Chemical mapping of a 207-nucleotide RNA with DMS and 2A3.
The 2A3 profile rests on 1,128 reads.
Conditions: 150 mM KOAc, 10 mM MgCl2 and 150 mM bicine (pH 8.5), 24 C.
The data come from the RNA Mapping Database (RMDB), library M2RFPK.
RNA sequence: GGGAACGACUCGAGUAGAGUCGAAAAUUAUACCCGCAUAUCAUUCAGACCCUUUAUGGAACUGUCAUUCAACCCCAAGAAUCUAGUGCAAAUAUUGUCUUAAUUACUUAGGCUAAAAGAAAUAAGUUAUACAAUACACUCUUCGGAGUGUAUUGAACCAUGAAUACUUCUUCGGAAGUAUUCAUGGAAAAGAAACAACAACAACAAC
Reactivity to DMS in 0.01 (KOAc 150mM, MgCl2 10mM, bicine 150mM(pH8.5), 24C), signal-to-noise 1, nucleotides 027 to 156: u020u020a160u000a150c010c020c020g000c150a140u010a050u010c030a060u020u000c030a020g000a150c040c010c010u000u000u000a030u050g030g030a170a090c070u000g010u010c050a070u020u000c030a030a180c130c020c020c000a080a190g000a090a050u000c020u000a120g040u000g030c020a110a090a180u010a040u010u020g020u000c070u020u020a100a030u000u000a140c000u000u000a040g030g010c030u000a130a090a030a090g020a040a100a060u010a020a130g030u000u000a070u000a130c000a050a000u020a010c000a020c000u000c000u020u010c300g040g020a030g030u000g010u000a000u000u010g000a090a150
Reactivity to 2A3 in 0.01 (KOAc 150mM, MgCl2 10mM, bicine 150mM(pH8.5), 24C), signal-to-noise 2, nucleotides 027 to 156: u090u030a040u060a240c000c000c020g080c080a100u140a070u110c040a020u130u090c030a050g020a140c000c000c020u130u150u300a050u160g020g000a040a060c040u060g060u110c020a060u080u020c010a060a090c070c040c000c000a030a030g030a040a030u040c070u090a010g080u020g070c010a010a090a040u100a060u090u120g020u000c010u050u040a070a060u080u070a120c070u030u050a030g000g060c000u150a150a100a000a000g080a020a130a010u120a110a000g000u030u070a130u000a050c000a000a000u000a000c000a000c000u020c000u060u060c050g070g000a000g000u000g010u000a000u000u000g000a000a000